[RMDB]
RNA sequence: GGGAACGACUCGAGUAGAGUCGAAAACAGGACGUUAGCAUAGGUCCAAUUUACUAUGCAGAUUGCAUCGUCGGAGACGACGUAGAGACCGCUACAGCAGGGUCGAUGAACUGCUGAAUUACACCUCUUAUCAUAGCGAGGGAUCAAGCUAUGUACAGAGGAUGGAUUAUUUCGAUAAUCCAUCCUCAAAAGAAACAACAACAACAAC
Reactivity to DMS in 0.01 (KOAc 150mM, MgCl2 10mM, bicine 150mM(pH8.5), 24C), signal-to-noise 2, nucleotides 027 to 156: c020a220g000g000a070c000g000u010u000a130g010c000a050u000a030g010g000u010c100c110a060a130u000u000u010a070c010u000a000u010g000c000a190g010a140u020u000g020c020a070u000c030g000u000c020g020g000a220g000a190c030g030a050c020g020u050a020g000a100g010a060c050c000g010c050u000a080c010a080g010c000a060g030g010g010u010c080g050a110u000g000a060a090c020u000g000c000u000g010a200a090u010u000a070c060a080c060c010u000c020u020u010a120u010c060a050u000a030g020c010g010a120g020g000g010a100u000c060a060a260g010c000u000a000u000g020u000a070c030a200
Reactivity to 2A3 in 0.01 (KOAc 150mM, MgCl2 10mM, bicine 150mM(pH8.5), 24C), signal-to-noise 3, nucleotides 027 to 156: c030a010g040g000a010c020g030u090u170a010g000c010a020u000a010g020g010u020c010c000a010a000u060u040u030a020c000u020a000u020g000c020a020g110a300u190u250g040c060a090u090c020g050u010c000g040g020a050g030a040c010g010a010c000g010u030a030g010a000g010a070c010c010g020c070u100a020c010a000g000c000a010g000g030g000u020c060g090a100u180g030a020a030c010u010g000c000u010g010a020a020u120u060a080c060a060c030c020u040c020u080u120a070u100c010a000u000a000g000c020g000a030g000g040g030a040u150c040a040a000g000c000u000a000u000g000u010a020c050a040

Annotation: Source: RMDB library OK3TST, as collected in RNAgym. This 207-nucleotide RNA was probed chemically with DMS and 2A3. For 2A3 the reverse transcriptase was SuperScript II with manganese. The DMS profile rests on 2,521 reads. The RNA was probed in 150 mM KOAc, 10 mM MgCl2 and 150 mM bicine (pH 8.5) at 24 C.